[RMDB]
RNA sequence: GGGAACGACUCGAGUAGAGUCGAAAAUGUCAUAGUCAACGUCCGGCUCCCCCGUCUGUACGCUGGCGCUCUCCGGACCACCUUAAUACCAGCUACAGAGAAACUGACACAUCGUCAAUAAUGCGUGCACCUCGGGUAAUUUCGAUUACCCGAGGUGAAAAGAAACAACAACAACAAC
Reactivity to 2A3 in 0.01 (KOAc 150mM, MgCl2 10mM, bicine 150mM(pH8.5), 24C), signal-to-noise 4, nucleotides 027 to 126: u190g060u060c030a050u090a100g040u020c000a080a040c110g070u050c040c010g010g000c020u030c000c000c000c000c000g120u060c020u020g020u010a020c140g010c030u010g010g000c030g030c040u080c020u010c030c020g040g000a060c030c020a050c020c000u120u200a170a030u070a110c020c010a010g000c000u020a020c010a000g040a010g000a060a080a010c070u030g020a000c020a010c000a130u130c060g050u040c020a020a050u110a110a070u210g060c030g030u020g020
Reactivity to DMS in 0.01 (KOAc 150mM, MgCl2 10mM, bicine 150mM(pH8.5), 24C), signal-to-noise 2, nucleotides 027 to 126: u000g010u030c020a190u040a060g000u000c010a090a150c140g000u010c090c010g010g010c070u000c000c000c000c000c040g000u000c000u060g020u000a020c200g000c000u000g000g010c160g030c040u020c080u000c040c050g010g030a170c070c090a110c050c020u000u030a060a090u010a150c090c000a010g020c030u010a030c030a030g010a070g000a030a060a110c070u000g040a050c040a010c100a090u030c040g000u000c030a000a100u060a030a120u000g000c140g000u000g060